[RMDB]
RNA sequence: GGGAACGACUCGAGUAGAGUCGAAAAGAGUAGGCAACUUCUUAUUAGAACUACCCAUUGGUGGGAUUCGUGCUGACAGCUUCGCCAAGAAGAGGGGGUCUCUUAUAGUCACGUAAGUAGUGGGUCCCCUUGAAGAAUUGUUCGCAAUUCUUCAAGGAAAAGAAACAACAACAACAAC
Reactivity to 2A3 in 0.01 (KOAc 150mM, MgCl2 10mM, bicine 150mM(pH8.5), 24C), signal-to-noise 9, nucleotides 027 to 126: g060a020g050u140a040g030g030c040a070a050c030u060u030c020u070u120a140u090u160a110g030a080a040c030u120a130c030c000c030a060u040u130g070g000u080g010g040g050a070u070u120c080g040u110g050c040u070g050a050c020a040g010c020u080u070c040g020c040c020a040a030g080a040a010g030a110g040g010g000g010g030u000c010u000c000u050u070a080u040a150g090u080c020a010c090g010u010a030a080g020u030a020g020u070g030g050g000u040c010c020
Reactivity to DMS in 0.01 (KOAc 150mM, MgCl2 10mM, bicine 150mM(pH8.5), 24C), signal-to-noise 9, nucleotides 027 to 126: g000a060g020u010a040g000g010c060a080a080c050u000u000c030u000u010a120u030u020a100g010a090a060c100u010a100c010c010c050a190u020u010g000g010u020g000g000g010a110u020u010c070g010u020g000c040u000g010a100c150a110g000c040u000u000c050g000c060c070a070a090g010a050a070g000a060g000g000g000g010g000u000c010u000c020u000u020a090u010a070g000u020c080a050c090g000u010a040a060g010u020a050g020u020g000g000g000u010c010c020